[RMDB]
Structure probing data (2A3 and DMS) for a 177-nucleotide construct. Source: RMDB libraries RFM100 and RFMREP, as collected in RNAgym. Conditions: 150 mM KOAc, 10 mM MgCl2 and 150 mM bicine (pH 8.5), 24 C. DMS (dimethyl sulfate) methylates the pairing face of unpaired adenines and cytosines.
RNA sequence: GGGAACGACUCGAGUAGAGUCGAAAACUUAAGCGAAAGCAUUUGCCAAAGAUGUUUUCAUUAAUCAAGAACGAAAGUUAGAGGUUCGAAGGCGAUCAGAUACCGCCCUAGUUUUAACCAUAAAAGACCUGUAAUUUGAAUUCGUUCAAAUUACAGGAAAAGAAACAACAACAACAAC
Reactivity to 2A3 in 0.01 (KOAc 150mM, MgCl2 10mM, bicine 150mM(pH8.5), 24C), signal-to-noise 4, nucleotides 027 to 126: c010u050u050a050a010g100c020g060a000a000a000g010c000a020u000u010u080g120c090c080a130a150a020g020a010u000g020u010u010u000u000c000a010u010u110a020a080u070c080a080a070g060a080a050c060g040a150a080a050g050u040u120a070g040a080g130g080u040u060c020g010a040a000g010g010c000g020a040u050c050a070g120a220u090a120c040c000g010c000c000c000u010a030g000u000u010u030u120a030a040c020c010a020u090a100a180a010a010g100a100
Reactivity to DMS in 0.01 (KOAc 150mM, MgCl2 10mM, bicine 150mM(pH8.5), 24C), signal-to-noise 3, nucleotides 027 to 126: c080u000u010a030a050g030c100g020a030a010a000g000c000a010u000u010u000g000c130c180a070a140a040g000a000u000g000u020u010u010u020c000a070u030u000a030a110u010c070a170a110g000a050a030c050g010a080a090a040g000u000u000a120g010a100g000g010u000u000c010g010a050a250g010g000c000g000a010u000c120a110g000a130u050a090c130c010g000c020c000c040u000a200g010u000u010u020u020a010a090c020c040a120u020a050a150a140a080g020a140